[RMDB]
This 177-nucleotide RNA was probed chemically with 2A3 and DMS. The reactions ran in a buffer of 150 mM KOAc, 10 mM MgCl2 and 150 mM bicine (pH 8.5), at 24 C. For 2A3, 2,595 sequencing reads were counted.
RNA sequence: GGGAACGACUCGAGUAGAGUCGAAAAGAUAUGGACGCAGGGACAUGCUCGGCGGAUCGGAAACGAUCCCGAGAGCAACAGCCUGCGUCCUAAGUCAAAUCAUUGCGGUGUUCGCACCGCAAUGAAACUUUGAAUGCACGUUCGCGUGCAUUCAAAGAAAAGAAACAACAACAACAAC
Reactivity to 2A3 in 0.01 (KOAc 150mM, MgCl2 10mM, bicine 150mM(pH8.5), 24C), signal-to-noise 1, nucleotides 027 to 126: g020a010u030a040u130g020g000a030c010g030c010a000g000g030g080a140c050a100u070g020c000u000c010g100g090c150g060g000a000u000c010g020g000a050a040a050c010g000a000u030c000c010c000g140a150g000a000g020c010a000a020c030a000g090c010c000u000g010c000g010u000c000c000u000a000a010g000u010c010a000a020a100u000c010a000u010u000g000c000g000g000u000g030u070u090c180g120c100a000c000c000g010c000a000a000u010g000a010a010a000
Reactivity to DMS in 0.01 (KOAc 150mM, MgCl2 10mM, bicine 150mM(pH8.5), 24C), signal-to-noise 3, nucleotides 027 to 126: g000a080u000a300u000g000g000a060c000g000c000a030g000g000g010a100c300a190u010g010c000u000c000g000g030c300g010g000a000u010c000g010g000a140a160a220c010g000a000u020c010c000c010g000a250g010a000g020c030a010a060c170a250g000c000c000u000g010c010g000u010c000c000u010a010a050g010u000c030a100a090a150u000c000a010u000u000g020c000g020g000u000g020u000u010c270g010c010a000c000c000g010c000a010a000u000g000a030a060a110
2A3 is a SHAPE reagent: it acylates the 2'-hydroxyl of flexible nucleotides of all four kinds.